Chemical mapping of a 177-nucleotide RNA with DMS and 2A3. The 2A3 profile rests on 5,342 reads. Source: RMDB library M2PK50, as collected in RNAgym. DMS adducts were read by reverse transcription with MarathonRT. The reactions ran in a buffer of 150 mM KOAc, 10 mM MgCl2 and 150 mM bicine (pH 8.5), at 24 C.
RNA sequence: GGGAACGACUCGAGUAGAGUCGAAAAUCAAUGGACUUCGGUCCAUUGAAAAAGUCAAUAAAGCUUGUGCUGAGCUGAAUGACAACAGCACAAAGAAAAGAAAAAUCGUGCACUUCGGUGCACGAAACUAUAUAAUGGCGUUCGCGCCAUUAUAUAGAAAAGAAACAACAACAACAAC
Reactivity to DMS in 0.01 (KOAc 150mM, MgCl2 10mM, bicine 150mM(pH8.5), 24C), signal-to-noise 3, nucleotides 027 to 126: u000c000a010a000u000g000g020a020c010u000u010c220g040g010u000c000c000a010u000u000g000a000a050a100a160a140g010u000c030a060a070u010a070a110a040g000c010u000u010g010u000g000c030u000g010a030g020c020u010g010a100a080u000g030a060c140a060a100c030a000g010c000a010c000a180a080a070g000a070a050a070a120g010a010a080a110a090a090u000c010g010u000g010c000a010c000u000u010c160g030g000u000g000c000a000c000g000a000a010a070
Reactivity to 2A3 in 0.01 (KOAc 150mM, MgCl2 10mM, bicine 150mM(pH8.5), 24C), signal-to-noise 4, nucleotides 027 to 126: u010c000a000a000u010g010g000a020c010u030u040c260g060g000u000c010c000a000u000u010g000a000a000a000a000a010g060u060c040a040a070u090a260a180a010g000c040u090u100g030u000g030c000u020g010a030g020c020u060g120a150a150u210g050a070c020a030a010c000a030g010c000a000c050a020a070a010g100a010a090a000a030g120a020a110a010a010a020u020c000g000u000g000c000a000c020u040u080c250g110g000u010g010c000a000c000g000a000a000a000